[RMDB]
This 177-nucleotide RNA was probed chemically with DMS and 2A3.
The reactions ran in a buffer of 150 mM KOAc, 10 mM MgCl2 and 150 mM bicine (pH 8.5), at 24 C.
2A3 adducts were read by reverse transcription with SuperScript II with manganese.

RNA sequence: GGGAACGACUCGAGUAGAGUCGAAAAGCAUUCGCUAUGUUUAGGUUUAGAAUGUAGUUUAGUGCUAGCUGAUUAGAGUGUGUUAAAGACUUGUAGAGCGCCUUAGGGAAGAGCUAAUCAGUAAUACACUUUAAGUAAGGUUCGCCUUACUUAAAGUAAAAGAAACAACAACAACAAC
Reactivity to DMS in 0.01 (KOAc 150mM, MgCl2 10mM, bicine 150mM(pH8.5), 24C), signal-to-noise 9, nucleotides 027 to 126: g010c010a010u000u010c300g000c010u000a000u000g010u000u000u000a090g020g010u020u020u010a120g010a010a010u000g010u000a010g010u010u010u010a040g020u000g010c010u000a200g010c000u000g000a020u000u000a010g000a070g010u010g020u010g010u010u010a020a030a030g000a300c030u000u000g010u020a100g010a050g010c020g000c010c010u000u020a080g020g010g010a020a040g000a130g010c000u000a010a010u000c010a010g010u000a050a090u020a100c160
Reactivity to 2A3 in 0.01 (KOAc 150mM, MgCl2 10mM, bicine 150mM(pH8.5), 24C), signal-to-noise 9, nucleotides 027 to 126: g000c000a010u030u040c030g000c010u010a010u020g040u000u030u050a200g100g100u090u100u060a080g030a030a010u020g010u010a010g010u020u070u120a020g000u010g010c010u020a040g010c000u000g010a010u000u010a010g020a040g100u170g020u060g030u150u100a050a040a000g020a030c010u080u070g200u260a030g020a010g060c010g000c010c010u020u040a120g010g000g050a050a050g060a040g110c000u000a010a000u000c000a000g010u020a020a020u080a060c090